Chemical mapping of a 177-nucleotide RNA with DMS and 2A3. Conditions: 150 mM KOAc, 10 mM MgCl2 and 150 mM bicine (pH 8.5), 24 C. 2A3 adducts were read by reverse transcription with SuperScript II with manganese.
RNA sequence: GGGAACGACUCGAGUAGAGUCGAAAACUAUUUAUAGACAGAACAGUGGAAUACGUAUAUCGAUAUAAAACUUAAACACUGAUUCUUGCAGUGGUACGAUUCCACAUAGGCGAGGCAUCAGCGAAAGGAGUUGUUUAAUAUUCGUAUUGAGCAACUCAAAAGAAACAACAACAACAAC
Reactivity to DMS in 0.01 (KOAc 150mM, MgCl2 10mM, bicine 150mM(pH8.5), 24C), signal-to-noise 8, nucleotides 027 to 126: c020u000a050u020u020u030a070u030a060g010a100c110a100g000a100a080c140a090g020u000g000g000a060a010u010a070c020g010u000a010u000a100u020c150g010a090u040a110u030a060a050a070a070c120u020u010a040a040a100c020a020c000u000g000a090u020u030c180u030u030g010c010a020g000u000g000g020u010a010c030g000a100u010u010c000c000a000c010a070u030a070g020g000c030g020a090g010g010c060a040u000c040a050g000c050g010a040a060a080g010
Reactivity to 2A3 in 0.01 (KOAc 150mM, MgCl2 10mM, bicine 150mM(pH8.5), 24C), signal-to-noise 8, nucleotides 027 to 126: c000u010a060u040u160u050a110u050a020g110a040c050a020g080a110a020c010a030g030u010g010g020a020a010u060a100c000g020u020a020u010a010u080c050g070a010u060a020u070a170a120a030a030c040u080u130a050a040a010c010a000c010u000g020a080u140u100c060u030u160g010c000a000g000u000g020g000u010a010c030g020a030u010u000c000c000a000c000a010u030a010g050g010c020g020a010g030g000c020a020u010c010a030g030c010g050a090a020a010g080